[RMDB]
This 177-nucleotide RNA was probed chemically with 2A3 and DMS. For 2A3 the reverse transcriptase was SuperScript II with manganese. For DMS the reverse transcriptase was MarathonRT.
RNA sequence: GGGAACGACUCGAGUAGAGUCGAAAAGGGGAAAGGUUCCAUGUGAACAGCAGUUGGACAUGGGUUAGUCGAUCCUAAGACAUAGGGUAGUUCCGUUUGAAAGCGCGCCCUAGUGCGCCGUUUGUCGGUGAAGCACAAACUUCGGUUUGUGCUUCACAAAAGAAACAACAACAACAAC
Reactivity to 2A3 in 0.01 (KOAc 150mM, MgCl2 10mM, bicine 150mM(pH8.5), 24C), signal-to-noise 2, nucleotides 027 to 126: g020g000g000g030a090a010a000g030g000u020u080c000c010a010u010g020u010g150a120a000c000a030g110c060a100g000u240u090g050g060a000c000a020u000g050g000g040u080u140a010g000u050c030g010a050u030c000c000u020a150a110g050a060c030a070u060a010g000g000g000u000a080g000u010u110c010c020g000u140u000u100g050a120a060a010g010c090g030c000g000c040c000c020u120a150g000u080g020c090g050c020c110g000u080u000u120g140u110c120g000
Reactivity to DMS in 0.01 (KOAc 150mM, MgCl2 10mM, bicine 150mM(pH8.5), 24C), signal-to-noise 2, nucleotides 027 to 126: g050g000g000g000a110a010a200g010g020u010u010c010c030a090u040g020u030g000a030a010c080a150g010c280a150g050u000u010g000g010a080c060a040u000g020g060g040u060u000a100g000u000c000g000a180u010c050c020u020a100a160g010a140c020a040u030a130g000g000g030u000a040g000u000u000c040c020g000u080u020u000g010a070a030a070g000c100g000c000g000c050c050c160u020a050g000u020g000c050g000c020c050g000u000u000u000g010u000c060g000
It was measured as part of the RMDB libraries RFM100 and RFMREP.